[RMDB]
RNA sequence: GGGAACGACUCGAGUAGAGUCGAAAAUCUUAUUCACUGCGUUAAUUUAAUGGAAUAGCCACAUGGUCUUUUAUAAUGUCCCACUCUAAAGGGGACCAAGUGGAGGCCUGAAGCCGGGUUAUGAUGCUCUGAGAAACGGGUUCGCCCGUUUCUCAGAAAAAGAAACAACAACAACAAC
Reactivity to 2A3 in 0.01 (KOAc 150mM, MgCl2 10mM, bicine 150mM(pH8.5), 24C), signal-to-noise 1, nucleotides 027 to 126: u000c000u000u090a060u060u020c060a060c240u120g000c010g080u080u040a070a060u070u040u160a050a010u300g040g000a140a000u030a010g020c010c000a020c000a100u050g000g030u100c100u090u050u020u000a300u090a150a000u210g000u000c000c010c000a090c020u230c000u100a090a080a000g020g000g000g000a000c000c000a280a000g010u100g020g020a000g000g000c000c000u040g000a060a000g090c030c040g000g000g060u020u020a160u060g100a030u100g040c000
Reactivity to DMS in 0.01 (KOAc 150mM, MgCl2 10mM, bicine 150mM(pH8.5), 24C), signal-to-noise 1, nucleotides 027 to 126: u000c040u010u010a080u000u040c020a050c040u000g000c070g000u010u000a030a090u050u000u060a040a130u040g050g000a100a090u010a060g000c000c010a150c000a130u010g000g010u000c000u000u000u000u010a010u000a150a220u040g010u000c040c030c000a090c140u010c210u050a090a100a150g000g000g030g000a010c000c090a010a040g040u030g000g000a040g000g000c000c000u000g010a040a220g000c070c010g010g000g010u000u000a020u000g000a070u000g000c140